The record gives the reactivity of an RNA of 177 nucleotides to DMS and 2A3.
RNA sequence: GGGAACGACUCGAGUAGAGUCGAAAAGGAUCCUCUCACAGGAUUGUCUCUGUGUUCCGAAACUCCAACAUUAUUGCUUCGGGACACCUACAGCAAUAGUGUAGGUAUAGAGAGUAGGAGAGGAUCGCGGAUAUCGACUGUUCGCAGUCGAUAUCCGAAAAGAAACAACAACAACAAC
Reactivity to DMS in 0.01 (KOAc 150mM, MgCl2 10mM, bicine 150mM(pH8.5), 24C), signal-to-noise 2, nucleotides 027 to 126: g000g010a010u000c000c000u010c000u000c000a120c170a220g030g020a200u010u010g010u000c030u010c010u000g000u000g040u000u000c000c000g040a000a000a030c030u010c300c170a090a110c250a110u000u030a040u000u010g010c060u000u000c090g020g000g000a020c020a190c000c000u010a010c020a020g000c180a070a180u000a120g010u000g010u000a000g010g010u000a050u000a060g000a030g010a090g010u000a240g000g000a010g010a000g000g000a000u000c000g000
Reactivity to 2A3 in 0.01 (KOAc 150mM, MgCl2 10mM, bicine 150mM(pH8.5), 24C), signal-to-noise 2, nucleotides 027 to 126: g040g010a000u000c000c010u000c000u010c000a230c070a170g090g110a180u100u150g120u030c010u000c000u010g080u010g000u080u000c000c000g010a010a000a020c060u140c060c040a110a140c070a200u160u180a110u290u300g060c060u010u000c010g000g000g000a020c000a010c000c000u000a000c010a090g080c050a150a300u050a280g070u060g000u020a000g000g020u030a030u120a070g020a010g020a000g040u110a000g060g010a000g000a010g000g000a000u000c000g000
DMS (dimethyl sulfate) methylates the pairing face of unpaired adenines and cytosines. The RNA was probed in 150 mM KOAc, 10 mM MgCl2 and 150 mM bicine (pH 8.5) at 24 C. For 2A3 the reverse transcriptase was SuperScript II with manganese. For 2A3, 1,125 sequencing reads were counted. For DMS, 1,116 sequencing reads were counted.